[RMDB]
RNA sequence: GGGAACGACUCGAGUAGAGUCGAAAACAUCUCAGUACCCGCAGGAAGAGAAAACAACCGUGAUUCCGGGAGUAGUGGCGAGCGAAACCGGAUGAGGCCAAACCUACGACGUGUGAGACCCGGCAGGGUCCUGGAAAGGAUUCGUCCUUUCCAGGACAAAAGAAACAACAACAACAAC
Reactivity to DMS in 0.01 (KOAc 150mM, MgCl2 10mM, bicine 150mM(pH8.5), 24C), signal-to-noise 6, nucleotides 027 to 126: c140a160u010c030u000c010a090g030u000a090c030c020c030g020c060a070g000g010a090a080g010a160g010a070a070a090a090c120a100a120c040c050g010u000g000a190u000u000c010c010g000g000g000a070g010u000a070g010u000g000g050c210g010a250g000c000g000a080a140a120c010c010g010g000a010u000g000a120g000g000c040c060a030a090a090c050c030u000a060c070g020a040c110g000u010g010u000g000a110g000a070c020c010c010g010g000c120a090g010g010
Reactivity to 2A3 in 0.01 (KOAc 150mM, MgCl2 10mM, bicine 150mM(pH8.5), 24C), signal-to-noise 4, nucleotides 027 to 126: c030a100u020c020u010c030a020g060u090a060c010c010c020g000c040a010g040g040a130a090g080a050g040a170a090a030a070c050a040a030c030c030g110u100g050a050u040u000c000c000g020g000g000a000g000u010a000g000u030g080g170c210g040a040g020c010g010a020a000a010c000c000g020g000a010u000g000a010g000g000c000c010a070a060a050c020c010u060a040c030g050a010c040g020u050g000u020g070a030g020a050c010c010c010g020g010c040a050g140g080